[RMDB]
RNA sequence: GGGAACGACUCGAGUAGAGUCGAAAAGCAACGGUGGGCUGUACAACUCCCAUCGUCUGGCACCCGGCACACCCGCCGCUUGCCAACUCUCCCCCCGCGCAUACCUGGCUGCAGCGACUGACCCUUUAGCUUCUACUGAGUUCGCUCAGUAGAAGCUAAAAGAAACAACAACAACAAC
Reactivity to 2A3 in 0.01 (KOAc 150mM, MgCl2 10mM, bicine 150mM(pH8.5), 24C), signal-to-noise 2, nucleotides 027 to 126: g050c010a040a000c000g010g010u000g000g020g010c250u060g080u280a140c100a140a200c060u030c000c000c010a030u040c020g020u000c040u020g050g000c010a030c010c010c000g010g000c060a050c020a070c000c000c040g020c000c010g000c020u000u080g000c010c010a070a010c030u000c010u030c020c000c000c000c000c000g000c000g020c000a040u070a090c000c000u020g040g000c000u020g040c030a050g000c010g050a030c010u030g090a070c000c000c000u020u070u010
This 177-nucleotide RNA was probed chemically with 2A3.
For 2A3 the reverse transcriptase was SuperScript II with manganese.
Source: RMDB library RFM100, as collected in RNAgym.